The record gives the reactivity of an RNA of 177 nucleotides to 2A3 and DMS. The RNA was probed in 150 mM KOAc, 10 mM MgCl2 and 150 mM bicine (pH 8.5) at 24 C. For 2A3 the reverse transcriptase was SuperScript II with manganese. It was measured as part of the RMDB library RFMREP. The DMS profile rests on 975 reads. For 2A3, 1,339 sequencing reads were counted.
[RMDB]
RNA sequence: GGGAACGACUCGAGUAGAGUCGAAAAUUCCUGGUCUCCGCGCGAUUACACGCCGGCGACUCAAGGCACCUACACGAACGGACGGUUCGUGUCUCUCCCUAAGAUCGGGAGUAGCAGGGCAUAGGUUAUCCAUUUCUAGGUUCGCCUAGAAAUGGAUAAAAGAAACAACAACAACAAC
Reactivity to 2A3 in 0.01 (KOAc 150mM, MgCl2 10mM, bicine 150mM(pH8.5), 24C), signal-to-noise 2, nucleotides 027 to 126: u020u000c000c000u020g030g010u010c020u000c000c010g100c000g000c000g130a040u080u180a060c050a020c080g010c000c030g000g030c030g020a000c000u020c120a030a060g080g030c060a130c170c000u020a010c010a000c000g010a010a000c020g070g300a030c130g210g020u000u010c000g000u000g020u010c010u000c000u000c000c030c010u100a210a060g060a240u180c090g000g030g000a000g000u010a020g000c120a000g050g010g060c060a090u080a060g110g090u010u010
Reactivity to DMS in 0.01 (KOAc 150mM, MgCl2 10mM, bicine 150mM(pH8.5), 24C), signal-to-noise 2, nucleotides 027 to 126: u000u000c000c000u000g000g030u000c000u000c020c000g030c200g030c010g000a150u000u040a200c290a150c020g000c030c010g000g050c090g030a010c000u000c140a100a060g000g020c230a080c020c010u000a050c010a000c010g000a000a000c010g000g000a180c220g020g030u000u000c010g010u000g000u010c030u000c000u000c000c000c010u020a130a140g000a080u030c260g010g000g020a010g020u010a030g040c230a040g000g000g020c040a120u000a080g010g000u000u000